[RMDB]
RNA sequence: GGGAACGACUCGAGUAGAGUCGAAAACUGGGAUUACAGGCUUGAACUACCACCUGUAAUAUUUUUAGUAGAGAUGGGUUUUCACCAUGUUAGCCAGCUUGGUCUCGAAUUCCUGACCUGAAGUGAUCUGCCCACCUCAGCAUCCCAAAGUGCUGGGCAAAAUAUCAGAGUUCGCUCUGAUAUUUUGAAAAGAAACAACAACAACAAC
Reactivity to 2A3 in 0.01 (KOAc 150mM, MgCl2 10mM, bicine 150mM(pH8.5), 24C), signal-to-noise 2, nucleotides 027 to 156: c030u070g020g020g030a030u040u010a010c020a010g040g030c070u150u180g070a150a060c100u130a130c130c040a010c010c020u020g010u040a040a000u030a020u070u110u050u040u130a070g020u030a020g010a020g010a080u060g010g000g000u040u060u070u060c030a030c020c000a010u050g030u090u080a020g040c000c010a010g000c020u040u060g030g010u020c020u020c080g030a040a080u090u060c020c030u050g040a050c000c000u030g040a050a030g030u010g050a080u020c010u070g050c000c020c000a020c000c030u030c000a010g010c010a030u090c010c030c000a040a050a000g020u040g000c020u030g010g000g000
Reactivity to DMS in 0.01 (KOAc 150mM, MgCl2 10mM, bicine 150mM(pH8.5), 24C), signal-to-noise 2, nucleotides 027 to 156: c040u000g010g000g010a080u000u000a010c010a050g020g000c030u010u010g000a110a160c140u020a130c060c040a030c010c010u040g060u000a010a040u000a010u000u000u010u000u000a110g010u000a110g010a050g000a050u000g010g010g010u000u010u000u000c060a090c020c020a100u000g000u000u000a080g020c030c010a100g030c010u000u020g030g030u000c040u000c070g020a110a160u010u010c000c000u000g000a070c060c000u000g010a090a070g020u000g010a020u000c050u010g030c000c030c000a030c000c020u010c030a090g010c000a090u000c030c010c090a060a080a160g020u000g010c020u000g000g000g000
This 207-nucleotide RNA was probed chemically with 2A3 and DMS. The RNA was probed in 150 mM KOAc, 10 mM MgCl2 and 150 mM bicine (pH 8.5) at 24 C. Reactivities are given for positions 27 through 156. The 2A3 profile rests on 1,368 reads. The data come from the RNA Mapping Database (RMDB), library OK3TST. For DMS the reverse transcriptase was MarathonRT.